[RMDB]
RNA sequence: GGGAACGACUCGAGUAGAGUCGAAAAGGUCUUACGUCAGCCAUGAGAACAACGGAAACUCUCAUGGUUGUCACAGAGAUGUGACGACGCUGACCAUCUAAGUUUCCGCUUGUUAGAUGGUAAGACAGGUGACGUCAUUAUUCGUAAUGACGUCACCAAAAGAAACAACAACAACAAC
Reactivity to DMS in 0.01 (KOAc 150mM, MgCl2 10mM, bicine 150mM(pH8.5), 24C), signal-to-noise 2, nucleotides 027 to 126: g020g010u000c000u000u010a070c120g000u000c030a260g000c080c010a050u010g000a140g010a010a020c020a040a070c010g000g020a000a030a040c040u000c080u000c080a020u000g000g010u000u000g000u000c000a000c020a000g020a180g000a200u020g020u000g010a020c010g010a070c230g030c260u030g010a010c030c030a010u020c090u000a040a060g000u000u000u000c010c010g000c230u000u000g000u000u030a080g020a010u000g010g040u010a020a060g020a020c000a080
Reactivity to 2A3 in 0.01 (KOAc 150mM, MgCl2 10mM, bicine 150mM(pH8.5), 24C), signal-to-noise 2, nucleotides 027 to 126: g030g030u010c000u060u070a050c060g030u030c000a010g010c000c010a030u040g040a080g010a200a020c020a030a010c010g030g000a020a000a010c020u010c020u030c020a060u070g000g010u040u070g010u000c000a000c010a000g030a010g020a060u030g020u000g000a010c030g040a040c040g000c240u110g020a000c020c000a040u020c050u070a040a000g000u020u040u000c020c010g000c160u010u010g020u010u000a030g000a040u020g030g010u030a090a040g000a010c060a040

Chemical mapping of a 177-nucleotide RNA with DMS and 2A3. DMS adducts were read by reverse transcription with MarathonRT. For 2A3 the reverse transcriptase was SuperScript II with manganese. As a SHAPE reagent, 2A3 marks flexible, mostly unpaired nucleotides at the ribose 2'-OH.